[RMDB]
RNA sequence: GGGAACGACUCGAGUAGAGUCGAAAAACGUGAUACGUCACGAUGCCCGGGCGCCCGUGGCGUUAGACUGAUGCUGUGAGGCUCCACAGAGGCAGUAACAGUCUACAGCCAUGGACACCCGGCGGAAGCCUAGUCCCCCGUUCGCGGGGGACUAGGCAAAAGAAACAACAACAACAAC
Reactivity to 2A3 in 0.01 (KOAc 150mM, MgCl2 10mM, bicine 150mM(pH8.5), 24C), signal-to-noise 1, nucleotides 027 to 126: a000c000g000u000g020a010u100a140c270g150u000c000a000c000g020a020u290g060c000c030c040g000g040g000c000g000c020c000c000g020u000g000g000c040g000u030u030a000g000a010c000u010g000a050u050g030c030u010g010u050g050a120g010g180c020u030c020c000a160c090a150g070a040g070g000c000a000g000u010a070a020c000a000g000u050c000u010a000c040a000g000c000c000a010u010g010g010a010c000a030c000c000c000g000g000c020g060g010a150a000